[RMDB]
RNA sequence: GGGAACGACUCGAGUAGAGUCGAAAAGCAGUCGGCUUCGGCCGACUGCAAAUAGAUCGGGCUACUAGAACAAAAACUAGAACAUAGAUCUAGUGUAGUUCAAAAUACGGGGGUUCGCCCCCGUAAAUCGUAAGUAUCUAUUCGUAGAUACUUACGAAAAAGAAACAACAACAACAAC
Reactivity to 2A3 in 0.01 (KOAc 150mM, MgCl2 10mM, bicine 150mM(pH8.5), 24C), signal-to-noise 3, nucleotides 027 to 126: g010c010a000g000u020c010g030g020c080u190u190c300g070g010c030c000g000a000c010u000g010c000a000a000a000u020a010g060a030u080c040g000g000g050c000u060a030c000u060a080g080a200a030c080a050a170a040a020a020c000u000a010g030a090a000c040a130u280a070g080a130u010c000u000a010g010u010g020u070a060g010u000u030c000a070a050a000a050u060a000c010g010g010g030g000g000u030u060c160g080c010c000c020c000c000g000u000a010a010a010
Reactivity to DMS in 0.01 (KOAc 150mM, MgCl2 10mM, bicine 150mM(pH8.5), 24C), signal-to-noise 5, nucleotides 027 to 126: g000c010a010g020u000c000g020g030c010u000u010c230g030g020c020c010g010a000c000u000g010c000a010a040a070u010a050g000a110u000c040g010g010g010c060u000a070c040u000a070g010a060a080c060a060a090a130a160a040c000u000a000g000a060a100c100a180u010a150g010a070u000c000u000a010g000u000g000u000a140g000u000u000c020a100a100a090a120u000a010c000g010g000g000g000g020u000u010c220g010c000c000c000c000c000g000u000a000a040a060